[RMDB]
RNA sequence: GGGAACGACUCGAGUAGAGUCGAAAACGCGAGGAGGGCGAGUACACUGUGGAGACCGCUGGCGCUAAGUCAGAGGAAGGAUUGGUCGACGGUAGGUCAGUAUGCCCCGAAUAUCCCGGGCUACACGCUUAUCAUCACUGUUCGCAGUGAUGAUAAGAAAAGAAACAACAACAACAAC
Reactivity to 2A3 in 0.01 (KOAc 150mM, MgCl2 10mM, bicine 150mM(pH8.5), 24C), signal-to-noise 2, nucleotides 027 to 126: c060g000c030g040a060g100g010a050g020g020g020c030g010a020g040u060a020c060a000c060u070g050u100g120g040a060g020a050c000c000g000c020u000g020g000c010g000c160u160a150a040g020u030c020a020g010a030g110g080a120a030g050g020a070u070u160g050g030u050c020g030a020c010g010g060u070a080g060g070u060c010a000g000u010a060u180g010c000c000c000c030g030a040a010u090a050u070c000c010c020g000g020g000c010u030a030c060a010c040g060
Reactivity to DMS in 0.01 (KOAc 150mM, MgCl2 10mM, bicine 150mM(pH8.5), 24C), signal-to-noise 4, nucleotides 027 to 126: c110g010c070g000a070g030g000a110g010g000g030c050g000a090g020u000a090c100a090c050u000g000u000g010g010a110g010a100c020c030g000c010u000g000g000c030g030c180u000a080a120g020u000c030a050g020a080g010g000a140a080g000g010a120u000u010g010g000u000c060g000a030c070g010g020u010a040g010g000u000c070a090g020u010a060u010g020c060c000c010c090g000a080a080u000a100u000c040c020c040g000g010g010c050u010a020c110a090c230g020
The data come from the RNA Mapping Database (RMDB), library RFMREP. An RNA of 177 nucleotides, treated with 2A3 and DMS and read out base by base. DMS adducts were read by reverse transcription with MarathonRT. The RNA was probed in 150 mM KOAc, 10 mM MgCl2 and 150 mM bicine (pH 8.5) at 24 C. For DMS, 3,088 sequencing reads were counted. 2A3 is a SHAPE reagent: it acylates the 2'-hydroxyl of flexible nucleotides of all four kinds.